[RMDB]
RNA sequence: GGGAACGACUCGAGUAGAGUCGAAAAUCCUACUGCCAGCGGAAUCACAUCUGGUAACAGAUGCCUCUGGGGCCAAAAGCCAAGGUUUAGCAGACCCUUUAGGAUUGGUUCAAUACCUGAGUUAAUACACCUUAUCCACAUUCGUGUGGAUAAGGUGAAAAGAAACAACAACAACAAC
Reactivity to 2A3 in 0.01 (KOAc 150mM, MgCl2 10mM, bicine 150mM(pH8.5), 24C), signal-to-noise 3, nucleotides 027 to 126: u000c010c000u000a010c020u010g000c020c000a010g000c000g080g030a050a100u190c080a140c000a090u020c000u000g010g030u020a030a000c010a000g000a020u010g000c000c010u000c020u010g000g000g000g000c010c020a060a070a050a030g020c010c030a020a060g000g040u070u100u130a080g000c090a010g000a060c010c000c030u020u050u080a000g010g000a010u030u080g070g020u090u100c050a060a030u150a240c010c010u060g040a070g080u070u100a130a030u070a130
Reactivity to DMS in 0.01 (KOAc 150mM, MgCl2 10mM, bicine 150mM(pH8.5), 24C), signal-to-noise 4, nucleotides 027 to 126: u010c010c000u000a030c030u010g020c010c010a010g030c110g000g000a070a040u020c210a300c020a000u000c010u000g020g000u030a180a170c010a000g000a020u010g000c000c000u000c000u000g010g020g020g000c020c020a080a080a130a300g000c010c010a210a110g010g000u000u000u010a210g000c260a200g000a020c030c010c000u010u010u000a010g000g000a030u000u000g000g000u000u000c120a080a130u030a100c010c040u000g010a080g020u020u000a100a120u030a220